[RMDB]
RNA sequence: GGGAACGACUCGAGUAGAGUCGAAAAGUCUAGCGAAGGGAUCCCACCCGGGAAACACGCAAGUCGCGAAUUACGCCGACCGGCCAAGGUCAAUGGCAGAACUCAACUGCAUGAGUAAGCUAGACGACAGCUAAUGACCAUUCGUGGUCAUUAGCUGAAAAGAAACAACAACAACAAC
Reactivity to DMS in 0.01 (KOAc 150mM, MgCl2 10mM, bicine 150mM(pH8.5), 24C), signal-to-noise 2, nucleotides 027 to 126: g020u010c020u000a010g000c000g000a160a050g030g000g000a040u000c000c010c000a300c050c000c000g000g010g000a130a180a160c020a030c000g020c050a050a060g010u020c060g020c200g020a070a070u000u000a240c140g010c010c010g020a010c040c020g010g020c190c300a080a160g040g010u010c000a130a090u000g010g030c000a030g000a100a080c030u000c040a080a050c030u000g030c010a040u000g000a170g010u000a090a180g030c010u000a000g000a020c000g010a160
Reactivity to 2A3 in 0.01 (KOAc 150mM, MgCl2 10mM, bicine 150mM(pH8.5), 24C), signal-to-noise 2, nucleotides 027 to 126: g010u000c000u010a000g010c020g090a300a300g010g000g020a020u030c010c000c000a040c020c010c000g040g000g000a070a100a020c010a000c020g000c100a110a070g050u070c020g010c050g160a090a040u160u070a060c050g000c030c010g050a010c000c020g050g100c180c090a100a060g000g010u050c060a020a150u130g000g000c020a010g030a070a020c010u000c070a020a030c030u010g000c030a020u030g010a000g060u040a000a030g000c000u000a000g000a000c000g030a010